[RMDB]
The record gives the reactivity of an RNA of 177 nucleotides to DMS and 2A3. In probing experiments dimethyl sulfate is read out at A N1 and C N3, which are open when not base-paired. Reactivities are given for positions 27 through 126. For 2A3, 1,480 sequencing reads were counted. The RNA was probed in 150 mM KOAc, 10 mM MgCl2 and 150 mM bicine (pH 8.5) at 24 C.
RNA sequence: GGGAACGACUCGAGUAGAGUCGAAAAGCACGAGCGGGAAAAGUUAGAUGCACUGUACGCCUACGUCAAACGCAGCGGUCAGCCUGACUGGGCGAAGGCCGUCGCCAGCCGGAACCUAGUGCAUGCAAGAAUAUAAGCCGUUCGCGGCUUAUAUUCUAAAAGAAACAACAACAACAAC
Reactivity to DMS in 0.01 (KOAc 150mM, MgCl2 10mM, bicine 150mM(pH8.5), 24C), signal-to-noise 3, nucleotides 027 to 126: g010c060a050c090g030a100g040c050g010g000g000a060a120a090a100g000u000u000a110g020a050u000g020c020a030c050u000g030u000a080c020g010c020c010u000a070c130g020u000c020a040a090a070c170g030c070a090g000c040g000g000u000c020a130g010c000c030u000g010a060c090u000g000g010g030c000g010a170a110g000g010c020c020g020u000c070g010c050c080a190g020c010c020g010g000a140a120c050c050u000a040g020u000g030c010a030u000g010c110a050
Reactivity to 2A3 in 0.01 (KOAc 150mM, MgCl2 10mM, bicine 150mM(pH8.5), 24C), signal-to-noise 1, nucleotides 027 to 126: g040c030a030c080g030a010g030c070g030g040g090a040a120a060a040g080u100u120a110g010a150u050g000c020a020c040u020g040u120a030c050g030c020c000u030a040c050g030u010c010a100a070a050c060g020c060a040g040c020g050g000u080c050a040g020c010c000u070g040a220c050u130g000g000g010c020g030a110a110g000g020c000c010g000u000c020g000c010c000a020g020c000c030g000g010a000a040c000c020u030a030g030u020g010c000a000u020g050c020a010